[RMDB]
RNA sequence: GGGAACGACUCGAGUAGAGUCGAAAAGUAUGUUACGAUUAUGUGACUAGCCAUAAUCGAUGAAGGUACUCGACUUCAUCGUAACAUAGAAUUGUCAGUGCGUACUGGCUAGUCACAGUACGGCAGACUACAGUCCUAGUCUGCCACUGACUAGGACCAUCAGCAUGAUCUUCGGAUCAUGCUGAUGAAAAGAAACAACAACAACAAC
Reactivity to 2A3 in 0.01 (KOAc 150mM, MgCl2 10mM, bicine 150mM(pH8.5), 24C), signal-to-noise 6, nucleotides 027 to 156: g010u020a010u110g040u060u140a060c050g020a210u110u080a080u160g010u010g000a000c000u000a000g010c010c000a090u130a100a070u160c020g000a000u020g010a000a000g040g030u080a080c040u050c110g080a030c000u010u000c000a000u000c010g000u010a030a010c010a060u120a050g200a180a130u140u140g080u130c090a070g150u080g260c080g050u070a070c040u020g000g010c000u000a000g000u000c000a000c000a000g000u010a000c000g010g000c010a010g010a060c010u060a030c120a010g000u000c000c000u000a000g000u000c010u060g160c030c010a020c020u010g000a000c000u000a000g000g010a000c010
Reactivity to DMS in 0.01 (KOAc 150mM, MgCl2 10mM, bicine 150mM(pH8.5), 24C), signal-to-noise 2, nucleotides 027 to 156: g030u000a070u000g000u000u000a020c030g020a150u000u000a060u010g020u010g000a000c010u000a010g020c140c010a070u000a120a070u000c020g010a050u000g030a040a000g020g010u010a100c180u010c070g010a140c000u000u000c020a030u000c020g000u000a040a070c020a060u010a120g030a080a220u000u000g020u010c030a190g030u000g040c040g020u000a140c170u000g000g050c010u000a010g000u000c030a020c010a020g020u010a050c040g000g000c030a100g000a070c020u000a050c080a120g000u000c040c030u000a010g000u010c020u000g000c030c000a010c030u000g000a020c010u000a040g000g010a060c050